[RMDB]
RNA sequence: GGGAACGACUCGAGUAGAGUCGAAAACAGCACAACCGCAUGUCCUAUCGGAAGCGGAUAAGCCGGUAGCACCGUGACUCACCUCCCGUGCCAGGCCCCAUGGGACAUUUCGUCGGGUCACGACGACAUACUUAUACUGUUUCGACAGUAUAAGUAUAAAAGAAACAACAACAACAAC
Reactivity to 2A3 in 0.01 (KOAc 150mM, MgCl2 10mM, bicine 150mM(pH8.5), 24C), signal-to-noise 9, nucleotides 027 to 126: c040a010g080c050a030c030a110a100c030c020g030c050a060u140g060u040c010c010u050a100u110c080g040g040a090a030g050c030g040g020a060u090a110a030g030c020c020g030g020u030a010g020c030a020c070c020g030u030g040a030c010u010c040a040c000c010u030c000c010c010g010u040g020c020c020a060g030g020c000c010c000c010a030u050g020g000g020a030c040a070u110u160u090c070g020u020c020g010g020g060u080c050a020c060g020a010c010g000a010c010
Reactivity to DMS in 0.01 (KOAc 150mM, MgCl2 10mM, bicine 150mM(pH8.5), 24C), signal-to-noise 9, nucleotides 027 to 126: c090a110g000c070a070c130a110a120c030c020g010c050a090u030g020u010c020c010u010a070u020c140g010g010a090a070g010c040g010g010a080u030a070a130g010c030c040g000g010u000a060g010c070a090c070c020g010u000g000a040c040u010c070a100c100c070u000c030c010c020g000u010g010c030c050a080g000g010c010c010c020c030a080u020g000g000g010a070c180a120u010u010u010c050g010u000c020g010g010g010u010c050a050c020g000a040c030g010a040c270
Record summary:
An RNA of 177 nucleotides, treated with 2A3 and DMS and read out base by base. Conditions: 150 mM KOAc, 10 mM MgCl2 and 150 mM bicine (pH 8.5), 24 C. The data come from the RNA Mapping Database (RMDB), library OK1LIB. For DMS the reverse transcriptase was MarathonRT. For 2A3 the reverse transcriptase was SuperScript II with manganese.